[RMDB]
RNA sequence: GGGAACGACUCGAGUAGAGUCGAAAAUUCUUCUACUUACUCCACAAGGCUUCUUUUCUUCAAACCAAACAUGCCCAUCUAUUUCAAACAGGGAGGCAGUGUGGAGUAGUGGAAAGAAGGCCAACUUAGACAAGGUACAAUUCGUUGUACCUUGUCUAAAAGAAACAACAACAACAAC
Reactivity to 2A3 in 0.01 (KOAc 150mM, MgCl2 10mM, bicine 150mM(pH8.5), 24C), signal-to-noise 7, nucleotides 027 to 126: u020u000c000u000u000c000u000a010c010u120u020a010c000u000c010c010a000c010a020a000g030g000c000u020u010c010u040u130u100u050c050u150u140c090a090a070a120c060c040a050a080a050c090a100u160g030c020c020c000a060u030c050u140a170u060u210u110c140a140a160a100c030a040g020g010g010a030g000g000c010a010g030u000g000u000g010g000a000g000u000a000g000u000g000g000a060a030a070g010a000a000g020g000c000c020a050a020c070u000u010
Reactivity to DMS in 0.01 (KOAc 150mM, MgCl2 10mM, bicine 150mM(pH8.5), 24C), signal-to-noise 1, nucleotides 027 to 126: u000u020c010u000u000c000u010a000c010u030u010a050c000u050c000c010a000c000a000a010g000g000c000u010u010c000u000u000u000u000c090u000u040c110a050a080a140c110c050a080a120a030c080a090u020g000c110c000c030a100u030c090u010a080u010u020u000c190a080a040a050c050a060g020g000g010a070g000g020c000a010g060u020g010u000g000g000a020g000u000a000g000u000g000g030a010a020a030g030a000a020g070g000c000c030a070a050c130u000u030
The data come from the RNA Mapping Database (RMDB), libraries RFM100 and RFMREP. Structure probing data (2A3 and DMS) for a 177-nucleotide construct. For DMS, 1,693 sequencing reads were counted. For 2A3 the reverse transcriptase was SuperScript II with manganese.